RNA sequence: GGGAACGACUCGAGUAGAGUCGAAAAAGAGAGAUGCGAGGUCUCACAGUGCGAUGAUGGAGGAGCCGAUGGGGAACAUAGUAUACCAGGGCGAGAGAUGAAAUGCCAAGACCCCUGGUGGACUGAGCAAGACAAGUAUGUUCGCAUACUUGUCUUGAAAAGAAACAACAACAACAAC
Reactivity to 2A3 in 0.01 (KOAc 150mM, MgCl2 10mM, bicine 150mM(pH8.5), 24C), signal-to-noise 3, nucleotides 027 to 126: a010g090a000g000a000g000a000u080g050c070g050a030g090g020u020c020u040c030a040c020a010g120u090g040c040g040a070u080g000a030u070g070g040a040g020g020a010g020c030c040g090a070u060g030g000g000g000a010a020c010a060u110a020g020u050a020u010a040c000c010a000g010g000g000c040g010a070g010a010g000a070u070g080a060a100a100u270g020c020c000a020a010g040a070c010c000c030c020u000g000g020u000g000g010a000c010u030g010a040g050
Reactivity to DMS in 0.01 (KOAc 150mM, MgCl2 10mM, bicine 150mM(pH8.5), 24C), signal-to-noise 7, nucleotides 027 to 126: a080g010a120g000a040g000a060u010g010c090g010a100g000g010u000c020u000c040a110c110a080g020u000g010c060g010a060u010g010a070u000g020g010a070g000g000a100g020c050c060g010a080u010g010g000g010g010a060a090c110a060u000a050g020u000a070u000a030c010c010a010g000g000g010c040g000a120g010a090g000a040u000g000a070a100a100u020g010c050c050a060a090g000a240c300c010c000c010u000g010g000u000g000g010a060c020u000g000a140g010